[RMDB]
RNA sequence: GGGAACGACUCGAGUAGAGUCGAAAAACGAAAAUCAUCGCUGAUUUGGCACACAAAGAAGGAGUUUUAUUAGGGAGGCACAUGGUUAAUACACCUUGUGUCAGAGACGUGAACACGUUCACAACUGGAUACAGCUUUCAUUCGUGAAAGCUGUAUCAAAAGAAACAACAACAACAAC
Reactivity to 2A3 in 0.01 (KOAc 150mM, MgCl2 10mM, bicine 150mM(pH8.5), 24C), signal-to-noise 2, nucleotides 027 to 126: a000c060g040a030a030a010a070u100c070a040u050c050g030c130u030g030a140u060u030u040g020g020c050a040c000a010c000a110a090a030g050a050a020g060g060a040g020u040u050u090u130a190u100u160a080g040g050g040a050g040g030c010a010c000a010u020g030g000u030u070a120a020u090a190c050a010c040c000u010u010g000u010g000u000c020a020g010a000g020a030c060g000u020g030a050a010c070a020c160g070u060u070c060a050c020a130a110c080u080g020
Reactivity to DMS in 0.01 (KOAc 150mM, MgCl2 10mM, bicine 150mM(pH8.5), 24C), signal-to-noise 6, nucleotides 027 to 126: a100c070g000a060a040a050a050u010c040a040u000c140g010c120u000g000a080u000u010u010g010g010c090a080c120a080c120a060a060a080g020a130a090g010g000a120g000u000u000u000u000a080u000u020a120g000g000g000a120g020g010c000a000c010a010u000g000g010u010u010a100a110u010a110c250a060c000c000u000u000g010u000g020u000c020a060g010a120g010a030c130g010u010g010a050a060c100a070c160g020u000u010c040a020c150a070a100c130u000g010
Chemical mapping of a 177-nucleotide RNA with 2A3 and DMS. For 2A3 the reverse transcriptase was SuperScript II with manganese. Values cover nucleotides 27 to 126.